[RMDB]
An RNA of 177 nucleotides, treated with 2A3 and DMS and read out base by base.
The DMS profile rests on 9,289 reads.
It was measured as part of the RMDB library OK1LIB.
The RNA was probed in 150 mM KOAc, 10 mM MgCl2 and 150 mM bicine (pH 8.5) at 24 C.
RNA sequence: GGGAACGACUCGAGUAGAGUCGAAAAGGCUCUUGGGUGGCGAACUGCCGCAGAUACGAAAGGCGCAGGAGUUGUGCCUGGAAGCGCGCCAGCGUGUCGAAGAGAAGGCUGUACUCCUCCAGCGUAAGCUGCCCAUUAUGUUCGCAUAAUGGGCAGCAAAAGAAACAACAACAACAAC
Reactivity to 2A3 in 0.01 (KOAc 150mM, MgCl2 10mM, bicine 150mM(pH8.5), 24C), signal-to-noise 5, nucleotides 027 to 126: g030g000c010u020c030u090u070g080g030g010u060g030g020c030g060a140a090c070u110g020c010c030g000c030a020g020a070u150a070c030g050a070a070a090g030g000c010g000c030a000g010g110a160g050u110u060g050u090g060c000c000u020g050g020a060a010g020c030g000c020g030c030c000a020g030c010g010u040g040u050c040g050a110a030g010a010g020a110a030g040g020c030u040g010u050a030c020u010c000c000u020c030c010a030g000c040g010u020a060a040
Reactivity to DMS in 0.01 (KOAc 150mM, MgCl2 10mM, bicine 150mM(pH8.5), 24C), signal-to-noise 5, nucleotides 027 to 126: g000g020c030u000c030u000u010g020g020g040u010g000g030c060g010a080a100c090u030g030c080c000g020c030a100g020a090u030a080c070g000a090a100a050g000g020c030g000c030a070g040g010a090g000u020u000g020u000g000c050c020u000g010g010a140a130g010c120g010c040g000c100c080a080g000c080g000u010g000u010c070g030a070a140g000a160g000a120a060g000g020c020u010g040u020a090c080u010c010c020u000c040c020a070g020c040g020u020a070a100